[RMDB]
RNA sequence: GGGAACGACUCGAGUAGAGUCGAAAAGCGUGACCGCGAGUUCGGGCGGCCGAUCACCGGUUACGUCGGUUGGUCGUCCGGGGACAGCGUGUUCUCGAUGAGCGUUUUGCUCCCGCGACGGAACCGCUCCGACGCUGCGUUCGACGAGAUAUCGAACACGAGUCUUUAGGUUCGCCUAAAGACUCGUAAAAGAAACAACAACAACAAC
Reactivity to 2A3 in 0.01 (KOAc 150mM, MgCl2 10mM, bicine 150mM(pH8.5), 24C), signal-to-noise 1, nucleotides 027 to 156: g070c010g020u010g020a030c010c010g000c020g040a110g040u080u150c000g000g040g000c020g020g010c020c000g050a130u080c040a020c030c040g080g040u300u300a080c090g020u060c050g000g000u020u030g000g000u040c000g010u000c050c040g020g010g000g010a000c010a000g000c020g050u170g060u200u000c090u060c050g040a150u130g030a010g000c010g040u040u130u280u300g000c030u010c000c000c020g060c030g000a010c020g070g000a070a090c030c160g110c100u020c010c000g040a030c020g010c040u090g070c040g050u000u040c000g000a020c040g020a030g040a250u220a030u160c010g000a000a030c040